Chemical mapping of a 177-nucleotide RNA with DMS and 2A3.
For DMS, 6,895 sequencing reads were counted.
The RNA was probed in 150 mM KOAc, 10 mM MgCl2 and 150 mM bicine (pH 8.5) at 24 C.
[RMDB]
RNA sequence: GGGAACGACUCGAGUAGAGUCGAAAAAUUACGGGCGGCGCAGGUGGAGCUGCGAUCCCUCCGCCCAUCGCGUGCUCUCUCGGUGGCCGAGACGCUGCAAACGGACAGGCGGGCCACCUGCAACGAAUGAUCAUAAACAGUUCGCUGUUUAUGAUCAAAAAGAAACAACAACAACAAC
Reactivity to DMS in 0.01 (KOAc 150mM, MgCl2 10mM, bicine 150mM(pH8.5), 24C), signal-to-noise 6, nucleotides 027 to 126: a080u010u010a080c140g010g010g010c020g020g010c190g000c080a030g000g000u000g010g000a140g010c030u010g010c010g010a090u000c020c020c010u020c010c010g010c010c010c020a070u000c060g000c040g010u000g010c050u000c080u000c060u010c110g000g010u000g000g020c010c010g000a120g000a140c060g010c020u000g010c060a050a090a120c210g010g000a120c060a090g010g010c070g020g000g000c020c010a020c010c010u000g010c050a080a060c070g000a110a130
Reactivity to 2A3 in 0.01 (KOAc 150mM, MgCl2 10mM, bicine 150mM(pH8.5), 24C), signal-to-noise 4, nucleotides 027 to 126: a000u190u150a090c070g000g000g000c010g030g000c010g000c030a010g030g040u120g090g130a100g070c010u010g020c030g020a040u040c010c000c010u010c010c000g000c000c000c000a010u060c030g020c030g020u040g010c020u000c000u000c010u030c150g020g000u030g020g000c010c010g040a100g040a090c060g000c080u030g010c030a130a170a140c060g020g090a070c020a040g060g070c010g030g000g020c010c000a010c000c000u000g010c020a030a030c020g050a070a080

It was measured as part of the RMDB library M2PK90.